[RMDB]
The record gives the reactivity of an RNA of 177 nucleotides to 2A3 and DMS. It was measured as part of the RMDB library TTRDES.
RNA sequence: GGGAACGACUCGAGUAGAGUCGAAAAGAUAUGGAUCCCACUGUAGACAUGCUAUAAUCCGUCGGAAACGACGGUAUAGCAACAGCUAUGUGGGAUCCUAAGUCAAACUACGGGUUCGCCCGUAGAAGUUAAGACUGACGUUCGCGUCAGUCUUAACAAAAGAAACAACAACAACAAC
Reactivity to 2A3 in 0.01 (KOAc 150mM, MgCl2 10mM, bicine 150mM(pH8.5), 24C), signal-to-noise 2, nucleotides 027 to 126: g000a020u040a020u090g040g000a010u000c000c040c000a000c030u100g030u040a040g030a100c070a300u300g020c000u000a020u030a160a250u160c020c000g000u000c000g020g060a030a030a020c000g000a000c000g000g000u000a000u000a000g000c000a050a060c070a070g070c010u030a010u070g010u000g020g030g000a000u000c000c000u010a010a000g000u000c000a090a010a070c010u010a010c000g030g000g020u020u100c300g160c070c000c010g000u010a000g000a050a010
Reactivity to DMS in 0.01 (KOAc 150mM, MgCl2 10mM, bicine 150mM(pH8.5), 24C), signal-to-noise 2, nucleotides 027 to 126: g000a030u000a300u000g010g000a010u000c000c000c010a020c000u040g040u000a030g010a050c120a200u000g000c000u000a000u000a030a150u030c010c000g010u000c000g000g000a090a080a150c000g050a040c000g000g000u000a000u000a010g000c000a030a090c300a190g000c010u000a010u000g020u010g000g020g000a000u000c010c010u000a000a050g010u000c030a130a130a250c000u000a010c020g010g010g000u000u010c300g010c000c000c010g040u010a000g000a070a100
For DMS, 1,910 sequencing reads were counted.